[RMDB]
RNA sequence: GGGAACGACUCGAGUAGAGUCGAAAAGUGGAGUACACGACUUUCCCAAGGCGAUUGUCAAUAGAGCGCGAAAAAUUCGAUGAGGAAGGCCAGAACCCCUUGGGUGGUUUAGUCGAAUUUUUUGAUUCACUAGGUACCUGUUCGCAGGUACCUAGUGAAAAGAAACAACAACAACAAC
Reactivity to 2A3 in 0.01 (KOAc 150mM, MgCl2 10mM, bicine 150mM(pH8.5), 24C), signal-to-noise 3, nucleotides 027 to 126: g010u050g030g060a150g100u220a060c030a050c010g050a010c070u060u000u000c020c010c010a000a000g080g000c030g110a170u040u230g070u010c050a030a100u100a130g110a030g050c040g030c030g130a010a000a000a010a000u040u060c020g000a000u070g000a100g230g070a180a080g080g000c010c000a000g110a200a200c010c010c020c050u190u230g000g030g000u070g000g030u010u200u170a010g000u000c000g000a000a000u000u000u000u000u000u100g150a150u010u000
An RNA of 177 nucleotides, treated with 2A3 and read out base by base.
For 2A3 the reverse transcriptase was SuperScript II with manganese.
Conditions: 150 mM KOAc, 10 mM MgCl2 and 150 mM bicine (pH 8.5), 24 C.